RNA sequence: GGGAACGACUCGAGUAGAGUCGAAAAGUUCAUCCCCUGAUCAAGGAUGCCCGAAACGGUGAGGCGGAAAGCAAAUUAGAUAACGUCAACCCAUCGGGACGGUUGGCCAGUUAAGAAGUGAGGAUUCAAAAGAUCGAACCGUUCGCGGUUCGAUCAAGUAGGGUAGUCAGUUCGCUGACUACCCUACAAAAGAAACAACAACAACAAC
Reactivity to 2A3 in 0.01 (KOAc 150mM, MgCl2 10mM, bicine 150mM(pH8.5), 24C), signal-to-noise 2, nucleotides 027 to 156: g060u070u160c020a010u030c050c010c020c000u120g030a120u040c010a010a060g070g010a000u060g000c050c010c000g080a160a080a000c040g010g000u060g000a090g000g000c010g000g080a080a040a040g030c040a080a060a110u180u180a090g030a050u130a100a000c040g000u000c000a000a010c000c000c000a050u110c010g020g000g010a000c010g020g030u000u010g010g030c000c000a110g000u050u080a090a000g060a040a000g030u030g050a060g090g010a050u080u010c050a030a000a000a080g000a000u000c000g020a000a010c010c000g010u050u160c290g000c000g020g000u000u000c000g000a000u000c000a000a000
The record gives the reactivity of an RNA of 207 nucleotides to 2A3. Values cover nucleotides 27 to 156. Conditions: 150 mM KOAc, 10 mM MgCl2 and 150 mM bicine (pH 8.5), 24 C. The 2A3 profile rests on 863 reads. The data come from the RNA Mapping Database (RMDB), library M2RFPK.